[RMDB]
RNA sequence: GGGAACGACUCGAGUAGAGUCGAAAAACAGACUGAUUCGUCAGUCUGUAAAAAGAUAUGGACGUCGUCCAAGACGAAGAACUGUCGUCGGAAACGACGACAGGGAGUCUUGUGACGAGCGUCCUAAGUCAAAAACACUGUGCUUCGGCACAGUGAACGCAAGAUACUGAUUCGUCAGUAUCUUGCGAAAAGAAACAACAACAACAAC
Reactivity to DMS in 0.01 (KOAc 150mM, MgCl2 10mM, bicine 150mM(pH8.5), 24C), signal-to-noise 1, nucleotides 027 to 156: a050c000a010g000a040c000u000g000a010u000u000c260g040u010c000a010g020u000c010u010g010u020a020a030a050a140a090g000a110u000a280u000g000g000a020c010g040u000c010g000u000c040c010a040a080g020a020c000g010a150a230g030a080a170c000u000g010u000c000g020u000c000g000g010a110a230a260c010g030a010c000g060a010c000a000g000g000g010a220g010u000c010u000u000g000u000g000a020c040g030a050g000c010g000u000c000c010u000a000a060g000u000c040a030a100a100a160a210c000a010c000u010g050u000g020c000u000u010c290g120g050c000a010c000a000g010u010g000a020a040
Reactivity to 2A3 in 0.01 (KOAc 150mM, MgCl2 10mM, bicine 150mM(pH8.5), 24C), signal-to-noise 3, nucleotides 027 to 156: a000c000a000g000a000c000u020g000a040u050u190c220g060u030c110a000g000u000c000u010g000u000a000a000a000a020a000g070a030u100a040u110g000g000a000c000g000u020c000g000u000c000c000a000a000g010a000c030g190a240a020g010a040a010c000u000g000u010c010g010u000c000g000g010a040a080a020c010g000a000c000g000a000c000a000g000g010g000a020g000u000c000u010u040g100u190g030a010c000g010a020g010c000g000u000c000c000u000a030a010g020u000c040a040a000a020a060a080c020a000c020u020g000u000g000c010u060u090c280g080g000c010a000c000a000g000u000g000a040a010